[RMDB]
RNA sequence: GGGAACGACUCGAGUAGAGUCGAAAACUGUCUGAUGCCCUGGGAAGACAGCAUGCCUCUCGAGAACAGGAACCAUGGUUUUAGUUCUCUUUGUUGUCCUAGGGCCUCCCAAGGAACAUGGCUGAGGUUUGCUUUGGAUUGACUGUAUUAUUAGCUAAUCGAUUACCCUUUUCGAAGGGUAAUCGAUAAAAGAAACAACAACAACAAC
Reactivity to 2A3 in 0.01 (KOAc 150mM, MgCl2 10mM, bicine 150mM(pH8.5), 24C), signal-to-noise 2, nucleotides 027 to 156: c030u030g020u000c010u030g080a040u150g020c020c000c010u000g000g000g020a070a030g060a030c010a000g020c080a050u120g060c040c020u070c020u040c040g030a000g020a040a000c020a160g070g070a030a010c060c000a170u260g150g110u000u010u010u050a040g000u020u020c000u030c000u070u060u030g020u000u040g030u000c000c000u010a010g000g000g000c000c010u030c000c000c010a010a020g060g000a070a010c020a080u070g050g000c020u040g030a040g010g120u020u040u090g030c000u080u080u070g070g050a080u060u120g030a030c050u050g040u090a060u160u020a050u060u060a170g010c070u140a050
Reactivity to DMS in 0.01 (KOAc 150mM, MgCl2 10mM, bicine 150mM(pH8.5), 24C), signal-to-noise 1, nucleotides 027 to 156: c020u000g010u000c010u030g020a120u000g000c000c000c010u000g030g060g010a170a040g010a040c020a050g020c030a130u000g000c040c010u000c070u000c070g000a120g020a030a050c030a290g000g000a060a060c010c060a180u000g070g060u000u010u000u010a060g010u000u000c000u000c030u010u000u000g000u020u020g010u000c010c020u000a070g000g010g000c000c020u000c010c020c000a150a100g000g000a030a060c060a200u000g050g040c030u010g030a150g010g010u000u020u000g030c020u000u020u000g010g000a110u000u000g000a060c060u010g010u000a080u000u000a100u000u000a070g020c020u000a160

About this RNA:
Conditions: 150 mM KOAc, 10 mM MgCl2 and 150 mM bicine (pH 8.5), 24 C. The record gives the reactivity of an RNA of 207 nucleotides to 2A3 and DMS. The DMS profile rests on 2,498 reads.